The record gives the reactivity of an RNA of 207 nucleotides to 2A3 and DMS. For 2A3 the reverse transcriptase was SuperScript II with manganese.
RNA sequence: GGGAACGACUCGAGUAGAGUCGAAAACUUAAAGCCAUGGCUUUAAGUUGACGAGGGCAGGGUUUAUCGAGACAUCGGCGGGUGCCCUGCGGUCUUCCUGCGACCGUUAGAGGACUGGAAAACCACAGGCGACUGUGGCAUAGAGCAGUCCGGGCAGCCAUAUAUCCCCGUUCGCGGGGAUAUAUGGAAAAGAAACAACAACAACAAC
Reactivity to 2A3 in 0.01 (KOAc 150mM, MgCl2 10mM, bicine 150mM(pH8.5), 24C), signal-to-noise 2, nucleotides 027 to 156: c000u010u010a010a000a010g000c040c030a180u300g140g000c020u000u000u000a010a000g000u000u030g020a020c080g040a090g020g000g020c040a010g020g020g040u110u190u090a170u150c080g030a050g060a070c040a120u060c010g090g000c040g040g020g070u040g000c010c010c000u010g020c000g000g000u000c000u120u070c020c020u000g010c020g030a040c000c000g000u000u010a020g010a030g010g010a000c000u010g030g050a040a050a050a090c000c010a000c000a010g030g000c020g030a060c050u010g000u010g010g000c000a060u130a010g060a030g060c000a000g010u000c000c010g000g000g000c000a000g010
Reactivity to DMS in 0.01 (KOAc 150mM, MgCl2 10mM, bicine 150mM(pH8.5), 24C), signal-to-noise 1, nucleotides 027 to 156: c010u000u000a020a010a030g000c010c030a120u000g070g000c030u020u000u000a030a020g020u010u010g000a140c060g000a130g020g010g000c010a090g010g010g020u020u000u030a080u010c020g010a130g000a110c080a070u000c030g030g000c080g030g030g000u000g000c020c010c030u000g030c000g070g000u000c020u000u000c060c020u020g030c070g020a050c010c010g010u010u000a100g000a190g020g000a030c000u040g000g000a070a090a150a040c000c000a030c040a030g010g010c300g020a110c040u000g030u000g000g030c000a110u000a060g020a270g010c020a050g010u000c020c020g000g020g020c040a120g010
For 2A3, 1,204 sequencing reads were counted.